[RMDB]
RNA sequence: GGGAACGACUCGAGUAGAGUCGAAAAUAAGCAAAAGACAACCACCUUUCCCGCUGACAAUAGCGUUAUCCCUCUGCACUUCGGUAAUAUGAGGGCACAGUAAUUCCCGCAAGGAUGAGAAUGUGAUUAAACAGUUACAGCUUCGGCUGUAACUGAACUGAUUAAAAGGCUUCGGCCUUUUAAUCAGAAAAGAAACAACAACAACAAC
Reactivity to DMS in 0.01 (KOAc 150mM, MgCl2 10mM, bicine 150mM(pH8.5), 24C), signal-to-noise 1, nucleotides 027 to 156: u000a070a150g020c050a100a050a080a090g000a070c040a120a100c020c040a140c060c000u000u000u000c030c020c020g050c050u000g050a100c090a100a090u010a000g000c030g020u020u000a120u000c000c000c020u010c020u030g030c030a050c030u020u000c100g060g030u000a040a150u000a090u000g010a140g030g040g000c020a080c070a050g030u000a060a160u010u000c010c000c000g000c120a150a130g030g000a130u000g000a090g070a070a060u010g000u010g020a080u000u010a040a070a110c000a030g050u010u000a020c000a010g000c000u000u020c290g140g020c010u000g000u030a000a000c000u000g000a010a130
Reactivity to 2A3 in 0.01 (KOAc 150mM, MgCl2 10mM, bicine 150mM(pH8.5), 24C), signal-to-noise 1, nucleotides 027 to 156: u140a010a010g090c030a070a060a060a040g070a060c030a000a010c040c040a030c000c010u060u020u020c000c010c010g020c060u070g010a060c040a120a140u130a100g010c020g040u060u160a150u180c000c000c000u000c000u000g010c010a010c100u080u090c240g150g000u050a040a010u130a080u300g000a010g000g000g000c010a000c000a050g090u090a080a060u020u040c010c000c000g030c050a020a000g040g030a020u120g010a030g030a060a100u110g040u040g010a020u090u250a040a050a020c000a000g000u000u000a000c000a010g000c030u030u070c100g150g000c000u000g010u000a000a000c000u010g000a010a000

This 207-nucleotide RNA was probed chemically with DMS and 2A3. For DMS, 1,669 sequencing reads were counted. For 2A3 the reverse transcriptase was SuperScript II with manganese. For 2A3, 519 sequencing reads were counted. The RNA was probed in 150 mM KOAc, 10 mM MgCl2 and 150 mM bicine (pH 8.5) at 24 C. Reactivities are given for positions 27 through 156.